[RMDB]
This 177-nucleotide RNA was probed chemically with DMS and 2A3. High 2A3 reactivity points to a flexible backbone, as in loops and unpaired stretches. For DMS the reverse transcriptase was MarathonRT. The reactions ran in a buffer of 150 mM KOAc, 10 mM MgCl2 and 150 mM bicine (pH 8.5), at 24 C.

RNA sequence: GGGAACGACUCGAGUAGAGUCGAAAAGUAUCGCCGCGGUUCUACGCGUAAUUGCUGUAGUGUAAGCGCCACGCCGGUAGGUGCUGACGUAGUUCAUUACCGCGCAGGUAAUGUUGAGAAGGAUGACCCAGCACUACCUGUUCGCAGGUAGUGCUGGAAAAGAAACAACAACAACAAC
Reactivity to DMS in 0.01 (KOAc 150mM, MgCl2 10mM, bicine 150mM(pH8.5), 24C), signal-to-noise 2, nucleotides 027 to 126: g010u000a040u010c030g050c130c010g050c010g010g010u010u010c040u000a030c040g010c010g060u000a080a100u010u020g000c020u020g040u000a020g030u000g010u000a080a140g010c040g020c010c020a050c050g000c060c030g010g010u020a030g030g020u000g020c110u010g000a070c030g010u000a100g020u000u000c020a020u000u000a030c000c050g030c150g020c150a120g010g000u000a010a030u010g000u000u010g000a120g020a120a070g020g000a100u000g000a150c150
Reactivity to 2A3 in 0.01 (KOAc 150mM, MgCl2 10mM, bicine 150mM(pH8.5), 24C), signal-to-noise 1, nucleotides 027 to 126: g050u030a060u140c010g050c030c020g020c070g030g000u030u090c020u030a020c000g000c020g050u060a020a110u100u230g030c100u090g010u060a040g010u060g040u150a100a010g000c000g000c060c000a060c040g060c070c020g060g020u050a100g030g020u070g020c040u000g000a030c040g070u080a070g130u030u110c030a020u060u030a000c030c040g000c040g000c160a000g000g010u020a030a000u010g050u080u120g090a120g000a140a040g090g010a030u120g050a000c010